[RMDB]
RNA sequence: GGGAACGACUCGAGUAGAGUCGAAAAUAGCCAGCAAGAGGUGGUUACUGCCUUAGGGAAGAUUCAGGACUAUAUCAACACUGCUCUUAAUGAUACCAUCCAACAGGUGGACUGUGUCACAUCCGCCCUUUACCCCAAGAUUCGUCUUGGGGUAAAGAAAAGAAACAACAACAACAAC
Reactivity to 2A3 in 0.01 (KOAc 150mM, MgCl2 10mM, bicine 150mM(pH8.5), 24C), signal-to-noise 5, nucleotides 027 to 126: u030a010g050c020c010a010g020c040a080a050g050a060g090g050u030g020g040u080u070a100c030u070g030c010c020u050u090a060g010g010g040a050a060g030a090u080u040c010a020g020g040a030c040u050a040u020a030u230c000a020a030c030a020c080u040g020c010u010c010u100u150a090a050u090g030a010u020a070c010c000a020u040c020c010a050a060c030a090g030g030u030g010g020a030c060u050g020u030g080u150c000a010c010a090u010c000c010g020c020c000
Reactivity to DMS in 0.01 (KOAc 150mM, MgCl2 10mM, bicine 150mM(pH8.5), 24C), signal-to-noise 5, nucleotides 027 to 126: u010a110g000c050c030a080g010c080a100a090g000a080g020g030u000g010g010u000u010a090c060u000g000c060c020u010u020a110g020g000g010a070a070g000a090u010u000c070a040g000g010a070c080u000a090u000a070u000c050a050a080c080a060c060u000g000c070u010c040u000u010a060a070u010g000a070u000a070c030c040a060u000c040c070a070a080c180a070g010g010u000g000g000a050c140u000g000u000g000u000c080a050c110a120u000c030c030g000c070c040

Chemical mapping of a 177-nucleotide RNA with 2A3 and DMS. The DMS profile rests on 5,766 reads. DMS adducts were read by reverse transcription with MarathonRT.